[RMDB]
RNA sequence: GGGAACGACUCGAGUAGAGUCGAAAAAGAUAUGGACCCGUAACUUCGCGACGAUCUGUACUAUUAGCUGUAUAUCGGAAACGAUAUACCGAGAGUACAGGGAGCGAAGGAGAAGGGUCCUAAGUCAUCGUUGAAAUAUCUUCGGAUAUUUCAACGAAAAAGAAACAACAACAACAAC
Reactivity to 2A3 in 0.01 (KOAc 150mM, MgCl2 10mM, bicine 150mM(pH8.5), 24C), signal-to-noise 2, nucleotides 027 to 126: a010g010a030u010a000u030g020g000a000c030c000c000g010u000a020a040c010u000u000c010g000c020g150a300c010g010a150u020c000u000g010u000a010c010u020a050u300u180a050g060c000u000g000u010a000u000a000u000c000g000g000a010a000a010c000g000a000u000a000u010a000c000c010g020a020g000a010g020u000a000c000a000g000g000g000a000g000c000g000a000a000g030g000a000g010a000a000g000g010g000u000c000c000u010a000a010g010u000c010a060
Reactivity to DMS in 0.01 (KOAc 150mM, MgCl2 10mM, bicine 150mM(pH8.5), 24C), signal-to-noise 4, nucleotides 027 to 126: a110g000a020u000a040u010g010g010a010c000c000c000g010u000a150a300c000u000u000c000g060c000g020a060c300g000a010u020c000u000g010u000a000c020u000a100u000u020a180g010c040u000g000u000a000u000a000u000c000g020g000a010a010a030c000g010a010u000a000u000a000c000c060g000a110g000a030g000u000a000c010a010g010g000g010a000g040c010g010a010a000g000g020a060g010a150a190g000g000g020u000c000c000u000a000a070g000u000c010a170